[RMDB]
RNA sequence: GGGAACGACUCGAGUAGAGUCGAAAACAAGAGCUGGCGCGAGGUCGUGGACCACUACGCGCGGCAGGCCGUCAAGGGCCGGGAGCGGCUCGACGAGCCGUGCGCGGUGGACCUGACGUUCUACAUGCCACGGCCGGCCGGGCACUAUCGCAAGGACCGUCCCCUUACAUUUCGAUGUAAGGGGACGAAAAGAAACAACAACAACAAC
Reactivity to 2A3 in 0.01 (KOAc 150mM, MgCl2 10mM, bicine 150mM(pH8.5), 24C), signal-to-noise 1, nucleotides 027 to 156: c110a020a060g010a000g160c000u020g110g040c100g020c010g230a040g000g030u000c020g030u020g030g010a040c010c000a000c010u120a030c020g000c000g000c000g030g010c010a010g050g060c080c000g040u070c030a140a300g000g000g020c030c150g110g000g020a210g300c030g000g000c000u000c030g040a010c030g020a000g000c010c000g000u050g000c030g000c020g000g060u010g000g000a020c000c040u040g140a070c050g020u060u030c060u210a220c030a150u090g020c010c020a010c000g010g050c000c000g000g020c010c000g020g050g020c150a090c130u070a090u090c070g050c130a090a010g000g020a010c040

Description
Structure probing data (2A3) for a 207-nucleotide construct. It was measured as part of the RMDB library OK3TST. Values are in units of 0.01, from 0 to 300, in steps of 10.